Source: RMDB library OK1LIB, as collected in RNAgym. This 177-nucleotide RNA was probed chemically with DMS and 2A3. 2A3 adducts were read by reverse transcription with SuperScript II with manganese. As a SHAPE reagent, 2A3 marks flexible, mostly unpaired nucleotides at the ribose 2'-OH.
RNA sequence: GGGAACGACUCGAGUAGAGUCGAAAAUUCAAGUGAUACAAUCAACCGCCACCUCUUGCGGCUACGGCCGGGUAUUCCAAGUGCACAAGAUAGGACCCGCCAAAGUAUGCUUGACUAUCACAACAGCGAGCUAUUUAUCGUUCGCGAUAAAUAGCUCAAAAGAAACAACAACAACAAC
Reactivity to DMS in 0.01 (KOAc 150mM, MgCl2 10mM, bicine 150mM(pH8.5), 24C), signal-to-noise 2, nucleotides 027 to 126: u000u000c060a050a080g000u010g000a060u050a050c000a170a080u010c140a130a070c040c010g000c040c050a230c120c040u000c040u020u000g000c030g010g020c100u000a070c180g000g000c060c010g000g000g010u010a040u010u020c020c090a070a090g060u040g040c080a060c160a100a160g020a040u030a110g000g000a090c020c000c040g010c000c030a020a060a070g040u000a030u010g000c030u000u020g000a000c300u030a040u040c070a090c110a020a090c160a030g050c300
Reactivity to 2A3 in 0.01 (KOAc 150mM, MgCl2 10mM, bicine 150mM(pH8.5), 24C), signal-to-noise 4, nucleotides 027 to 126: u100u040c030a040a010g010u060g130a020u030a040c030a050a100u120c020a030a060c000c000g040c010c000a120c070c060u130c060u080u140g020c000g000g010c020u040a040c080g040g000c040c040g020g030g010u010a170u060u110c040c030a180a010g090u060g120c060a090c030a120a030g040a090u110a070g010g070a010c000c000c000g000c000c010a060a010a000g020u030a020u110g010c000u000u050g020a020c010u060a080u160c060a000c060a220a080c000a070g170c040